[RMDB]
RNA sequence: GGGAACGACUCGAGUAGAGUCGAAAAAAUGAAGGCCCAUAACCAUAGCAACAUGUGCGUUGUAUCCUUUUUAUUAUGUCUUGACCUAAACUAACGCGUUGUUAAGAGUCGUAGGGCUCUGUACGUACAAGUAGGUAGGAUUCGUCCUACCUACUUGAAAAGAAACAACAACAACAAC
Reactivity to 2A3 in 0.01 (KOAc 150mM, MgCl2 10mM, bicine 150mM(pH8.5), 24C), signal-to-noise 6, nucleotides 027 to 126: a000a030u180g030a080a030g090g020c050c020c020a010u110a010a020c030c010a050u040a080g040c010a020a060c000a070u110g120u110g110c040g020u000u020g030u040a070u070c010c000u050u090u050u050u080a130u150u060a090u160g090u020c050u070u090g080a100c010c020u070a090a080a100c040u070a060a040c060g020c020g070u020u050g040u060u060a070a020g000a010g000u020c050g070u120a110g060g050g010c000u000c000u020g080u060a040c050g020u040a050
Reactivity to DMS in 0.01 (KOAc 150mM, MgCl2 10mM, bicine 150mM(pH8.5), 24C), signal-to-noise 9, nucleotides 027 to 126: a070a040u010g010a120a090g000g000c060c030c050a100u010a090a090c070c030a110u010a080g010c060a060a070c080a110u010g020u000g010c080g020u000u000g010u010a090u000c030c010u000u010u010u010u010a060u030u010a060u010g010u000c060u000u000g000a090c030c030u000a050a060a090c130u010a060a070c100g010c060g010u000u000g000u000u000a080a040g010a040g020u000c020g010u010a130g020g020g010c010u000c010u000g010u000a030c100g010u010a150
An RNA of 177 nucleotides, treated with 2A3 and DMS and read out base by base.
It was measured as part of the RMDB library OK2TST.
For DMS the reverse transcriptase was MarathonRT.